[RMDB]
RNA sequence: GGGAACGACUCGAGUAGAGUCGAAAAGAAAAGGUCCUGGUGACUCUUGAUGCACACGUUAAGGUUCCUGUGGAUAGCUAUCUGCCACCAGAUGAGAUAAUCAGCGAUCUUCAACGAUACUAUGACCCUCUACUCGUGAUUUCGAUCACGAGUAGAGAAAAGAAACAACAACAACAAC
Reactivity to DMS in 0.01 (KOAc 150mM, MgCl2 10mM, bicine 150mM(pH8.5), 24C), signal-to-noise 3, nucleotides 027 to 126: g010a140a110a060a060g020g000u000c020c030u000g000g040u000g000a100c090u000c020u010u010g010a090u000g010c050a060c080a050c050g000u010u000a060a070g010g010u000u000c060c020u000g020u000g010g000a110u010a080g030c060u000a060u000c020u000g000c060c060a080c090c050a030g000a100u000g000a040g000a070u000a090a070u000c050a030g020c160g020a030u000c050u000u000c120a080a120c120g000a080u010a040c090u010a100u010g000a140c070c060
Reactivity to 2A3 in 0.01 (KOAc 150mM, MgCl2 10mM, bicine 150mM(pH8.5), 24C), signal-to-noise 3, nucleotides 027 to 126: g050a000a170a000a000g000g020u010c020c000u040g080g000u030g040a050c030u060c020u090u090g050a020u110g010c010a000c010a010c120g140u120u160a150a070g110g030u040u030c030c020u020g020u020g050g040a130u060a110g000c030u040a030u080c030u050g030c050c010a070c060c020a020g030a090u090g010a050g010a030u080a080a040u040c000a000g010c020g130a030u000c020u020u000c050a070a040c070g030a050u090a170c030u050a070u200g060a030c000c000